[RMDB]
The data come from the RNA Mapping Database (RMDB), library OK2TRN. The record gives the reactivity of an RNA of 177 nucleotides to DMS and 2A3. The DMS profile rests on 788 reads. For 2A3, 2,004 sequencing reads were counted. For DMS the reverse transcriptase was MarathonRT. The RNA was probed in 150 mM KOAc, 10 mM MgCl2 and 150 mM bicine (pH 8.5) at 24 C. 2A3 adducts were read by reverse transcription with SuperScript II with manganese.
RNA sequence: GGGAACGACUCGAGUAGAGUCGAAAAUACGCGUAUAUACGAUCGCGUAAUGCGCUAUAAUGCUAGCAUCGUAGCAUUAGCUAUAUAAUUAUAAUGCCGUAAUGCCGAUCGAUGCGCAUCGCGGCUAGGUGAUAGCACCAUUCGUGGUGCUAUCACCAAAAGAAACAACAACAACAAC
Reactivity to DMS in 0.01 (KOAc 150mM, MgCl2 10mM, bicine 150mM(pH8.5), 24C), signal-to-noise 2, nucleotides 027 to 126: u000a010c090g030c030g020u000a000u010a110u000a150c180g020a170u010c160g020c040g050u000a030a010u000g000c070g000c100u000a060u010a030a020u000g030c000u000a060g010c130a100u000c100g000u000a010g010c000a010u000u000a080g000c100u000a070u010a020u040a100a130u000u050a080u000a120a080u010g010c020c020g040u010a040a020u000g090c000c300g000a170u030c060g000a050u010g010c130g010c030a030u010c040g010c000g010g030c010u000a010
Reactivity to 2A3 in 0.01 (KOAc 150mM, MgCl2 10mM, bicine 150mM(pH8.5), 24C), signal-to-noise 3, nucleotides 027 to 126: u110a030c010g050c020g080u110a050u060a000u020a110c130g060a110u150c060g030c010g150u010a000a060u070g040c050g000c090u030a030u030a230a060u050g000c020u010a030g050c020a120u060c080g090u020a000g000c000a020u020u030a030g020c030u030a030u040a020u050a300a050u210u160a110u060a220a100u180g030c010c000g010u000a000a030u010g000c050c030g060a070u150c130g090a100u060g000c040g010c040a010u000c050g000c000g010g000c040u000a030